Chemical mapping of a 207-nucleotide RNA with 2A3 and DMS. The reactions ran in a buffer of 150 mM KOAc, 10 mM MgCl2 and 150 mM bicine (pH 8.5), at 24 C. For DMS the reverse transcriptase was MarathonRT. Values cover nucleotides 27 to 156. It was measured as part of the RMDB library M2RFPK.

[RMDB]
RNA sequence: GGGAACGACUCGAGUAGAGUCGAAAAACCAAGUCUGGGGGCCGAUGAGGGUUGGCUCAAAGUAGGGUUUUGACUUGAAAACUCAAGCUGUGACCCCAAAACGAUGGAGAUAAAUGAGAAUCCUCCUAAAACUAUGGACACUUCGGUGUCCAUAGAACGAUUUCCUAUAGUUCGCUAUAGGAAAUCGAAAAGAAACAACAACAACAAC
Reactivity to 2A3 in 0.01 (KOAc 150mM, MgCl2 10mM, bicine 150mM(pH8.5), 24C), signal-to-noise 3, nucleotides 027 to 156: a000c010c000a020a010g120u030c020u070g020g000g000g010g070c020c000g010a020u050g070a130g060g100g020u030u050g020g000c010u010c030a020a000a030g060u080a050g030g030g050u030u040u080u060g040a060c010u020u030g050a120a080a080a120c050u020c030a020a010g030c030u030g040u150g160a180c010c010c020c020a000a120a000a030c070g040a090u140g050g010a020g000a020u100a110a200a080u170g030a050g070a180a040u030c000c020u000c020c000u110a120a100a010a010c020u000a000u000g000g000a000c000a000c010u020u040c180g070g010u010g000u000c000c000a000u000a000g000a000a000
Reactivity to DMS in 0.01 (KOAc 150mM, MgCl2 10mM, bicine 150mM(pH8.5), 24C), signal-to-noise 1, nucleotides 027 to 156: a120c040c000a050a200g020u000c020u000g060g060g020g130g000c050c060g000a120u000g030a120g030g000g050u000u000g010g000c050u010c020a020a080a110g040u000a120g000g050g000u000u020u000u000g030a060c020u000u000g020a060a150a120a130c160u000c020a020a100g050c020u000g020u010g000a210c000c000c000c020a040a090a110a100c080g080a160u030g010g010a020g090a070u010a020a120a080u000g020a130g010a190a080u000c100c000u010c000c040u000a020a020a060a230c000u010a010u000g000g020a070c000a020c000u010u020c300g020g000u000g020u000c000c000a030u000a000g000a050a220